[RMDB]
RNA sequence: GGGAACGACUCGAGUAGAGUCGAAAAUGAAAUUCAACUUCAGCCUGAAGUGGAACACUGCUCAAGAUAAAGGCUCUGCAAAAUGUACUGUAAAUGAUUCACAACCGUUAAUGCAAAGAUCCAGGUGAAGAAAUAUCCUGAAGAAAAACCCGUCCUAGCAUAGUAUUACGUUCGCGUAAUACUAUGCAAAAGAAACAACAACAACAAC
Reactivity to 2A3 in 0.01 (KOAc 150mM, MgCl2 10mM, bicine 150mM(pH8.5), 24C), signal-to-noise 1, nucleotides 027 to 156: u060g020a050a000a020u120u080c030a050a020c020u040u030c040a040g100c020c010u050g020a050a000g020u040g000g050a060a040c020a020c080u100g000c000u030c050a030a090g020a110u160a150a080a020g000g000c000u030c040u110g000c010a060a080a040a110u060g040u020a030c050u010g000u120a070a060a090u160g070a090u130u070c060a040c000a180a080c040c010g040u080u120a100a020u160g060c040a100a050a060g040a010u030c030c000a020g000g000u030g030a080a090g020a030a120a020u090a010u020c020c000u050g060a070a060g060a050a090a070a020a020c020c050c000g040u060c020c050u000a020
Reactivity to DMS in 0.01 (KOAc 150mM, MgCl2 10mM, bicine 150mM(pH8.5), 24C), signal-to-noise 1, nucleotides 027 to 156: u020g010a040a070a110u000u000c040a050a120c040u010u010c060a110g000c160c090u030g020a050a050g030u000g000g060a110a050c030a100c010u000g050c000u000c030a040a170g000a180u010a090a040a130g000g020c000u030c030u020g020c100a070a070a100a080u020g000u010a100c110u010g010u000a050a090a190u000g000a100u000u000c040a060c070a040a130c010c060g030u000u000a060a100u000g000c020a040a100a100g000a080u000c010c020a050g030g040u020g010a080a070g010a160a110a090u020a110u020c000c030u010g000a030a120g030a120a030a080a090a120c020c000c000g010u000c000c020u000a300

Chemical mapping of a 207-nucleotide RNA with 2A3 and DMS. For DMS, 1,593 sequencing reads were counted. 2A3 adducts were read by reverse transcription with SuperScript II with manganese. For 2A3, 1,118 sequencing reads were counted. It was measured as part of the RMDB library OK3TST. For DMS the reverse transcriptase was MarathonRT.